[RMDB]
Record summary:
The record gives the reactivity of an RNA of 177 nucleotides to DMS and 2A3. It was measured as part of the RMDB library M2PK50. The RNA was probed in 150 mM KOAc, 10 mM MgCl2 and 150 mM bicine (pH 8.5) at 24 C.

RNA sequence: GGGAACGACUCGAGUAGAGUCGAAAAGCAUUCCACUUCGGUGGAAUGCAAAUGCCGGCUGCAAGAAAAGUGCUUCAAACAGUGGGAGCACUGCCGAAGAAAAAAGUUCCAUGUUCGCAUGGAACAACGUUUCUUUAUGGUUCGCCAUAAAGAAACGAAAAGAAACAACAACAACAAC
Reactivity to DMS in 0.01 (KOAc 150mM, MgCl2 10mM, bicine 150mM(pH8.5), 24C), signal-to-noise 2, nucleotides 027 to 126: g020c000a000u000u000c020c020a020c000u000u000c170g020g040u010g000g000a010a000u010g050c000a010a020a040u000g000c070c020g000g020c010u000g000c220a090a100g020a090a050a080a060g000u000g000c010u000u000c000a110a120a110c230a170g020u010g020g040g000a000g020c000a000c010u000g000c050c040g010a140a120g020a000a030a040a060a070a050g030u000u000c000c000a010u000g000u000u020c150g010c000a000u000g020g000a000a000c010a030a060
Reactivity to 2A3 in 0.01 (KOAc 150mM, MgCl2 10mM, bicine 150mM(pH8.5), 24C), signal-to-noise 3, nucleotides 027 to 126: g000c000a000u000u000c010c010a010c010u040u060c150g110g000u000g010g000a010a000u000g000c000a020a030a000u090g020c030c000g000g010c020u080g030c070a080a070g060a140a170a010a010g010u000g010c000u020u000c030a120a300a300c110a170g160u230g100g000g010a000g000c000a000c000u010g020c000c000g050a080a130g070a040a110a010a020a000a000g010u010u020c000c000a000u010g050u020u030c210g000c060a010u000g000g000a010a000c000a000a000